This 177-nucleotide RNA was probed chemically with DMS and 2A3.
For DMS the reverse transcriptase was MarathonRT.
[RMDB]
RNA sequence: GGGAACGACUCGAGUAGAGUCGAAAAGAUAUGGAACGUUUCAACGGGCGUCUCAACAUCUACCCACCAAGGCCAUCGGAAACGAUGGCUUGAGGAUGUUGAGACGCCUAUCAACGUUCCUAAGUCACAUCAUACGUCAGUUCGCUGACGUAUGAUGAAAAGAAACAACAACAACAAC
Reactivity to DMS in 0.01 (KOAc 150mM, MgCl2 10mM, bicine 150mM(pH8.5), 24C), signal-to-noise 3, nucleotides 027 to 126: g010a050u030a300u030g000g000a000a020c000g010u000u000u010c240a100a120c210g000g000g020c000g020u000c000u000c000a010a020c000a000u000c000u010a130c100c040c100a300c200c040a020a030g010g000c000c000a000u000c010g010g010a140a150a140c010g020a000u000g000g000c000u000u000g000a070g000g000a020u000g020u000u000g000a010g000a000c000g000c010c010u020a010u010c140a000a020c000g030u000u000c000c000u010a060a070g000u000c020a230
Reactivity to 2A3 in 0.01 (KOAc 150mM, MgCl2 10mM, bicine 150mM(pH8.5), 24C), signal-to-noise 1, nucleotides 027 to 126: g010a010u100a030u190g010g010a000a020c030g010u060u120u240c230a070a110c190g000g000g000c020g000u010c010u030c000a000a000c020a020u000c010u090a230c020c050c040a030c020c070a080a040g300g300c020c000a010u000c010g100g040a090a090a090c020g010a000u000g020g000c000u010u000g000a000g020g000a010u040g010u000u000g000a000g000a020c030g000c020c010u000a000u000c000a000a000c000g010u000u000c020c000u000a100a050g000u020c010a000
It was measured as part of the RMDB library TTRINS.
For 2A3, 3,162 sequencing reads were counted.
Reactivities are given for positions 27 through 126.
Conditions: 150 mM KOAc, 10 mM MgCl2 and 150 mM bicine (pH 8.5), 24 C.